[RMDB]
RNA sequence: GGGAACGACUCGAGUAGAGUCGAAAAGGGAAAGGUGAAAAGCACCCCGGGAGGGGAGUGAAACAGUACCUGAAACCGUGCGCCCGCAAGGCGUCGGAGCACCCUUUUAGAGGUGUGACGGCGUGCCUGAGCACGUGCUAUUCGUAGCACGUGCUCAAAAAGAAACAACAACAACAAC
Reactivity to DMS in 0.01 (KOAc 150mM, MgCl2 10mM, bicine 150mM(pH8.5), 24C), signal-to-noise 3, nucleotides 027 to 126: g030g000g020a080a060a010g020g030u000g000a030a090a070a300g010c030a030c000c020c010c000g020g090g010a210g000g000g020g000a100g000u020g000a210a120a110c270a090g050u020a020c010c020u000g010a010a100a300c000c000g000u030g030c170g000c010c010c000g000c200a080a070g000g010c010g040u010c020g010g010a300g000c000a010c000c000c010u000u010u020u080a110g010a200g000g000u000g000u010g000a300c000g000g010c000g000u040g000c040c080
Reactivity to 2A3 in 0.01 (KOAc 150mM, MgCl2 10mM, bicine 150mM(pH8.5), 24C), signal-to-noise 2, nucleotides 027 to 126: g000g020g010a080a050a000g020g000u040g030a110a060a000a000g020c020a050c000c000c010c000g000g030g000a210g070g060g010g000a090g050u050g000a060a030a130c070a000g090u090a000c020c020u030g000a260a020a000c000c000g020u090g110c080g080c000c010c010g060c040a050a000g040g000c000g000u000c000g020g000a000g000c000a000c000c000c000u060u130u050u150a130g130a110g000g000u000g000u010g020a020c000g000g040c030g000u110g030c000c040

Chemical mapping of a 177-nucleotide RNA with DMS and 2A3.
Values cover nucleotides 27 to 126.
DMS adducts were read by reverse transcription with MarathonRT.
2A3 is a SHAPE reagent: it acylates the 2'-hydroxyl of flexible nucleotides of all four kinds.
In probing experiments dimethyl sulfate is read out at A N1 and C N3, which are open when not base-paired.
Values are in units of 0.01, from 0 to 300, in steps of 10.
The reactions ran in a buffer of 150 mM KOAc, 10 mM MgCl2 and 150 mM bicine (pH 8.5), at 24 C.